The record gives the reactivity of an RNA of 177 nucleotides to DMS. Source: RMDB library TTRDEL, as collected in RNAgym. Conditions: 150 mM KOAc, 10 mM MgCl2 and 150 mM bicine (pH 8.5), 24 C.

RNA sequence: GGGAACGACUCGAGUAGAGUCGAAAAGAUAUGGAGUUACUAUAUGCACGACCUUUGAUCUCGGAAACGAGGGAGGUCGUGAACUACAUAAGUAACUCCUAAGUCAAAACCGUAGUUCGCUACGGAAUCUAACCUCAUUCUUCGGAAUGAGGUUAGAAAAAGAAACAACAACAACAAC
Reactivity to DMS in 0.01 (KOAc 150mM, MgCl2 10mM, bicine 150mM(pH8.5), 24C), signal-to-noise 2, nucleotides 027 to 126: g000a010u000a300u010g000g000a020g000u000u000a000c000u000a110u000a010u010g000c000a010c000g000a010c010c010u000u000u000g020a080u010c000u000c000g040g000a050a100a160c000g000a010g010g020g000a000g020g000u000c000g010u000g000a020a010c040u010a300c000a010u000a020a010g000u000a000a020c000u030c000c000u000a010a050g000u000c000a120a110a140a190c000c000g010u000a000g020u020u000c240g020c000u010a000c000g020g030a080a060